[RMDB]
RNA sequence: GGGAACGACUCGAGUAGAGUCGAAAAGAUAUGGAAGGACGCAGGAUUAGACAGCUAGCACUAUGCGUUCGGAAACGAACGCACGAAUGCUAGAACUACUGUACUAAUCCUGCGUCCUUCCUAAGUCGAUGAACACUAUCUUCGGAUAGUGUUCAUCAAAAGAAACAACAACAACAAC
Reactivity to DMS in 0.01 (KOAc 150mM, MgCl2 10mM, bicine 150mM(pH8.5), 24C), signal-to-noise 3, nucleotides 027 to 126: g000a060u010a300u000g000g000a040a000g000g000a010c000g010c000a010g000g010a010u000u010a010g020a040c020a000g020c010u000a000g000c010a020c050u010a240u000g000c010g020u000u000c000g000g000a120a120a220c010g000a010a000c010g020c010a020c030g000a080a060u000g010c000u000a000g020a070a020c090u010a300c010u000g000u000a130c000u000a010a010u010c000c000u000g000c030g010u000c000c000u000u000c010c010u000a030a090g000u010c110